[RMDB]
Source: RMDB libraries RFM100 and RFMREP, as collected in RNAgym. Structure probing data (2A3 and DMS) for a 177-nucleotide construct. Reactivities are rounded to 0.1 and cut off at 0 and 3. Conditions: 150 mM KOAc, 10 mM MgCl2 and 150 mM bicine (pH 8.5), 24 C.
RNA sequence: GGGAACGACUCGAGUAGAGUCGAAAAACGACUGCGUAUACGUACGCAGUCGAAACAGAUGAUGCACUAUCCGAAGGCUUAGCCAGGGUAUGUGUUGAUGUACUGGCCGAGUUACGACUCGGCCAGAAUCAUCUUGAUUGUUCGCAAUCAAGAUGAUAAAAGAAACAACAACAACAAC
Reactivity to 2A3 in 0.01 (KOAc 150mM, MgCl2 10mM, bicine 150mM(pH8.5), 24C), signal-to-noise 9, nucleotides 027 to 126: a000c000g000a000c000u000g000c000g010u010a010u010a060c250g070u000a000c000g020c000a000g000u000c000g000a010a000a000c040a010g150a150u180g010a020u070g030c000a000c010u010a010u010c010c010g110a300a110g040g000c090u210u170a040g010c000c010a020g020g000g000u030a030u220g000u000g000u000u010g010a030u060g030u080a080c000u000g000g000c000c000g000a000g000u010u060a110c280g030a020c110u000c000g000g000c000c000a000g000a000
Reactivity to DMS in 0.01 (KOAc 150mM, MgCl2 10mM, bicine 150mM(pH8.5), 24C), signal-to-noise 9, nucleotides 027 to 126: a110c020g010a010c000u000g010c010g030u000a030u010a100c210g030u000a010c010g010c000a000g000u000c000g000a020a050a080c110a080g000a110u020g010a140u010g000c010a010c010u000a020u000c000c000g010a230a120g010g010c010u030u020a140g010c000c000a170g000g010g010u000a010u030g010u000g010u000u000g000a100u010g020u010a210c000u000g000g000c000c000g000a020g020u000u000a110c200g020a060c000u000c000g000g010c000c010a000g000a030